[RMDB]
RNA sequence: GGGAACGACUCGAGUAGAGUCGAAAAAGGAGGCCGUUCAGCUGUGACGAAGGCCUGAAGCACAGGAUUAGGACUGAAGCGAUGAUGUCCCCUUCCCUACUUCCCCUUGGGGCUCCCUGUGUCAGGGGUCUGAGAAACUGUUCGCAGUUUCUCAGACAAAAGAAACAACAACAACAAC
Reactivity to DMS in 0.01 (KOAc 150mM, MgCl2 10mM, bicine 150mM(pH8.5), 24C), signal-to-noise 2, nucleotides 027 to 126: a050g010g030a070g010g020c050c020g000u020u010c040a100g030c100u000g030u000g000a080c100g000a120a110g010g000c010c000u000g000a080a120g020c040a040c080a060g000g010a110u010u000a080g010g020a050c030u010g000a190a070g000c220g000a130u010g010a110u000g000u010c000c010c040c050u000u010c010c000c020u000a100c120u000u000c020c030c000c120u000u000g000g010g000g020c080u010c080c010c000u000g000u000g020u000c030a090g000g010g020
Structure probing data (DMS) for a 177-nucleotide construct. Reactivities are given for positions 27 through 126. The reactions ran in a buffer of 150 mM KOAc, 10 mM MgCl2 and 150 mM bicine (pH 8.5), at 24 C. For DMS, 2,346 sequencing reads were counted. It was measured as part of the RMDB library OK2TRN.